[RMDB]
RNA sequence: GGGAACGACUCGAGUAGAGUCGAAAAGCGCAAAUCCACAAACGCCAACGAUGUGCGUUUCGCUGUAGCCGCUUAAGGCAACAGCCGGGGCCGCCUGAGCCCUGUUACCAAAGACGGCUGGCGGGGGUAAUUACUUAUUGCUUCGGCAAUAAGUAAACCUUUCGUAUGUGUUCGCACAUACGAAAGGAAAAGAAACAACAACAACAAC
Reactivity to DMS in 0.01 (KOAc 150mM, MgCl2 10mM, bicine 150mM(pH8.5), 24C), signal-to-noise 1, nucleotides 027 to 156: g000c000g040c020a020a050a020u000c010c100a090c010a070a180a020c020g000c000c030a040a150c100g050a050u010g030u000g020c010g000u000u000u010c060g040c050u040g010u000a040g050c000c010g000c230u000u010a120a180g030g030c000a080a030c000a060g010c030c030g060g000g020g010c020c020g010c070c040u010g030a150g000c000c020c000u000g000u000u000a120c050c030a070a130a140g000a140c300g020g030c060u000g030g000c060g030g000g000g040g010u010a050a150u000u000a010c000u000u010a010u000u000g030c000u010u010c260g030g000c000a010a010u000a000a010g030u000a020a000a060
Reactivity to 2A3 in 0.01 (KOAc 150mM, MgCl2 10mM, bicine 150mM(pH8.5), 24C), signal-to-noise 2, nucleotides 027 to 156: g010c010g010c020a040a030a040u050c030c050a050c060a120a080a020c080g010c040c000a090a030c090g080a110u060g050u020g020c000g010u040u050u100c050g000c010u000g010u040a030g000c000c010g080c160u250u190a170a070g010g010c000a030a000c000a010g000c000c010g000g000g000g000c030c100g030c010c020u030g010a020g000c010c000c000u000g040u060u090a020c000c000a010a000a000g020a000c020g030g020c030u060g030g000c040g020g000g010g010g030u050a020a140u080u020a010c000u000u000a000u000u000g010c000u020u010c140g120g010c000a000a000u000a010a000g000u000a000a010a000
Structure probing data (DMS and 2A3) for a 207-nucleotide construct.
Values cover nucleotides 27 to 156.
The 2A3 profile rests on 1,985 reads.